[RMDB]
Structure probing data (DMS and 2A3) for a 207-nucleotide construct. Values cover nucleotides 27 to 156. DMS adducts were read by reverse transcription with MarathonRT. The DMS profile rests on 4,217 reads. For 2A3 the reverse transcriptase was SuperScript II with manganese. Conditions: 150 mM KOAc, 10 mM MgCl2 and 150 mM bicine (pH 8.5), 24 C. For 2A3, 1,964 sequencing reads were counted.
RNA sequence: GGGAACGACUCGAGUAGAGUCGAAAACGAUCGUCUUUCCGUUGCUGCUGGUCAUCGCGGUCUCACUGCUGCUAGUUUUAGCGGUACAAUGUUGCGCGCGGUACUGCACGCAGCGAUUUGCGGACGCACGGACACAUGCAGCUGCUGAGGGAAAGAAAUUUAAGCACUUCUUCGGAAGUGCUUAAAUAAAAGAAACAACAACAACAAC
Reactivity to DMS in 0.01 (KOAc 150mM, MgCl2 10mM, bicine 150mM(pH8.5), 24C), signal-to-noise 1, nucleotides 027 to 156: c040g020a140u000c100g000u000c020u000u000u000c030c020g020u000u000g010c010u010g000c000u000g000g000u000c030a090u010c080g000c050g040g030u000c000u000c040a080c020u000g000c000u000g000c000u000a070g060u000u000u000u000a050g030c010g020g040u000a050c100a070a070u000g010u000u010g030c010g030c010g030c030g020g020u010a070c170u000g090c000a040c030g020c000a030g000c000g000a080u000u000u000g040c010g030g010a090c020g000c020a070c080g020g020a040c040a100c060a090u000g010c030a020g020c000u000g010c050u010g040a160g010g010g010a060a020a050g000a040a090
Reactivity to 2A3 in 0.01 (KOAc 150mM, MgCl2 10mM, bicine 150mM(pH8.5), 24C), signal-to-noise 4, nucleotides 027 to 156: c030g040a130u170c050g040u040c020u020u030u000c010c020g050u020u060g000c000u000g000c010u010g010g040u040c040a100u170c160g070c070g070g110u050c030u020c000a050c030u030g010c000u000g010c010u040a130g140u150u050u190u150a000g000c000g000g020u040a010c070a110a210u170g010u070u050g030c090g000c010g000c010g020g150u160a090c070u130g000c010a000c040g000c000a020g000c000g050a080u050u020u140g030c060g030g020a010c010g000c040a040c110g060g000a020c080a010c000a190u250g010c040a020g010c010u010g010c030u070g030a090g040g030g020a040a030a030g050a020a050